Annotation
Structure probing data (2A3 and DMS) for a 177-nucleotide construct. For 2A3, 38,196 sequencing reads were counted. For DMS, 37,656 sequencing reads were counted. The reactions ran in a buffer of 150 mM KOAc, 10 mM MgCl2 and 150 mM bicine (pH 8.5), at 24 C. Source: RMDB library OK1LIB, as collected in RNAgym. DMS adducts were read by reverse transcription with MarathonRT.
RNA sequence: GGGAACGACUCGAGUAGAGUCGAAAACUUGACCCCUUAGUGAGCGUGGUCAGCUGCCGCUUAGAAUCGGUCUCGAUUAGUUGGCCCGGAAUAAAAGGGGAUCGGCUUAGUCCGUGACACCGAUUCAGUCAUAUCUGGUCUUCGGAUCAGGUAUGACAAAAGAAACAACAACAACAAC
Reactivity to 2A3 in 0.01 (KOAc 150mM, MgCl2 10mM, bicine 150mM(pH8.5), 24C), signal-to-noise 9, nucleotides 027 to 126: c030u060u130g070a040c000c000c010c000u030u070a070g030u080g130a060g090c050g020u160g010g030u030c010a010g010c020u040g010c000c010g000c010u020u080a030g030a060a050u050c000g000g050u010c040u020c070g070a050u050u050a010g010u000u000g020g000c000c000c000g010g040a070a030u150a040a090a030a010g030g000g000g000a010u050c000g000g000c020u060u110a020g030u010c040c050g040u040g020a010c020a020c020c010g000a010u030u020c030a010
Reactivity to DMS in 0.01 (KOAc 150mM, MgCl2 10mM, bicine 150mM(pH8.5), 24C), signal-to-noise 9, nucleotides 027 to 126: c060u010u020g010a140c010c010c010c010u010u010a110g010u010g000a130g010c050g010u030g020g020u010c020a040g000c020u010g010c030c010g000c130u010u020a120g000a140a090u010c010g000g010u010c060u020c150g000a090u020u030a020g010u000u000g020g000c000c000c010g000g000a120a050u040a050a060a070a060g000g000g000g000a030u010c000g010g010c070u030u020a080g010u010c020c070g000u000g010a080c130a120c020c020g000a070u010u010c090a150